[RMDB]
RNA sequence: GGGAACGACUCGAGUAGAGUCGAAAAGAUAUGGAUUACAGAACUACGACAUUACAGCGACGAAGAGUCCCCUAGUCGGAAACGACUAGGGGACUCAGAGCUGUGGGUGUCGCUGUAAUCCUAAGUCGUACAUAUCAUAGUUCGCUAUGAUAUGUACAAAAGAAACAACAACAACAAC
Reactivity to DMS in 0.01 (KOAc 150mM, MgCl2 10mM, bicine 150mM(pH8.5), 24C), signal-to-noise 4, nucleotides 027 to 126: g020a080u010a300u000g000g010a010u010u000a020c010a010g010a160a100c190u020a300c020g000a010c010a010u000u010a020c000a010g000c000g010a160c300g000a140a100g000a040g020u000c000c000c000c000u000a000g020u010c000g000g000a100a100a230c000g020a030c010u010a010g020g010g000g000a000c000u000c000a020g010a140g030c000u000g020u000g010g010g010u000g010u000c000g000c000u000g010u000a010a010u000c000c000u000a010a080g010u000c100